[RMDB]
RNA sequence: GGGAACGACUCGAGUAGAGUCGAAAAAACAUAGUGAGAUCCCAUCUGUACAAAAAAUUUAAAAAUUAGCUGGACAUGGUGGCUCAUGCUUGUAGUCCCAGCUACUUGGGAGAGGUAGGAGAAUCACCUGAGCCUGGGAGGUCAAGGCUGAAGUGAACAUCAUUUAGUACUUCGGUACUAAAUGAUGAAAAGAAACAACAACAACAAC
Reactivity to DMS in 0.01 (KOAc 150mM, MgCl2 10mM, bicine 150mM(pH8.5), 24C), signal-to-noise 1, nucleotides 027 to 156: a040a050c070a090u000a110g030u010g000a120g020a110u000c030c010c010a050u000c030u010g050u000a150c030a000a040a180a040a040a090u020u000u010a050a080a090a070a120u020u010a070g020c100u000g030g010a050c040a070u000g010g030u000g000g010c030u020c040a070u000g050c050u000u000g020u010a040g040u010c010c000c010a040g010c030u020a030c040u000u000g010g000g000a080g000a050g020g030u010a040g020g030a050g020a110a080u000c020a060c000c040u000g000a020g020c030c030u020g000g030g000a060g000g010u000c040a050a050g040g000c040u010g010a040a080g010u000g000a060a220
Reactivity to 2A3 in 0.01 (KOAc 150mM, MgCl2 10mM, bicine 150mM(pH8.5), 24C), signal-to-noise 2, nucleotides 027 to 156: a000a000c050a050u130a030g050u030g020a070g010a070u060c000c020c010a030u000c040u020g080u080a040c060a020a050a040a070a100a160u130u190u300a110a130a090a070a030u120u080a010g010c040u020g010g000a010c020a060u100g000g020u040g030g000c020u010c080a030u100g070c070u090u090g030u090a040g020u070c000c020c000a000g010c010u040a060c010u070u050g040g030g000a060g010a010g110g010u060a030g000g060a020g040a050a060u060c020a040c040c020u030g000a010g030c000c020u010g030g000g000a020g030g000u040c030a030a030g010g030c030u030g020a040a000g040u030g080a020a040
Source information
Structure probing data (DMS and 2A3) for a 207-nucleotide construct. The 2A3 profile rests on 1,457 reads. The data come from the RNA Mapping Database (RMDB), library OK3TST. Conditions: 150 mM KOAc, 10 mM MgCl2 and 150 mM bicine (pH 8.5), 24 C. For DMS the reverse transcriptase was MarathonRT. Reactivities are given for positions 27 through 156. For 2A3 the reverse transcriptase was SuperScript II with manganese.